[RMDB]
RNA sequence: GGGAACGACUCGAGUAGAGUCGAAAACUGAUUUUUCGGAUCCCAGCGAUGGAAGCGGUCACGGAAAGAGUAAAUUCGCUCUUUAGCGCGGGAUUUCUCUUCGUCACGGCGCGCACCACCGAAGGCGCCAUCCACCGGCGUUCGCGCCGGUGGAUGGAAAAGAAACAACAACAACAAC
Reactivity to 2A3 in 0.01 (KOAc 150mM, MgCl2 10mM, bicine 150mM(pH8.5), 24C), signal-to-noise 2, nucleotides 027 to 126: c030u040g100a220u040u020u030u240u300c010g040g000a070u070c000c000c040a000g090c060g070a070u090g010g000a010a010g060c020g070g000u060c000a070c180g060g090a020a100a010g090a000g040u220a030a000a090u070u040c000g030c080u070c060u300u180u240a120g020c070g000c060g040g100g020a000u010u010u050c020u010c000u000u000c000g050u030c000a040c250g000g000c020g000c000g000c000a000c000c000a000c000c000g060a120a090g020g040c090g000